[RMDB]
RNA sequence: GGGAACGACUCGAGUAGAGUCGAAAAUGCUUCUUCCAGACUGGCCUUCCUGGGAAGGCCCUGGAUAGGCUGUGCCUGGGGUUGGGGGUGAUGUUGCACUGGCAACAGCUGGAGGAGGCAGCUGGCCUGCUGCGUCUAGAUUCGUCUAGACGCAGCAAAAAGAAACAACAACAACAAC
Reactivity to DMS in 0.01 (KOAc 150mM, MgCl2 10mM, bicine 150mM(pH8.5), 24C), signal-to-noise 1, nucleotides 027 to 126: u000g010c010u000u000c060u010u010c000c000a000g010a170c130u000g020g010c000c000u000u000c020c030u000g020g020g020a130a090g000g010c000c000c020u000g030g000a070u000a070g010g010c000u000g010u010g010c000c020u010g000g000g000g000u010u010g010g000g000g000g030u000g020a080u000g000u010u000g000c020a210c230u020g000g000c040a030a030c030a070g000c020u000g000g010a050g020g000a020g010g000c010a010g000c170u010g010g000c070c040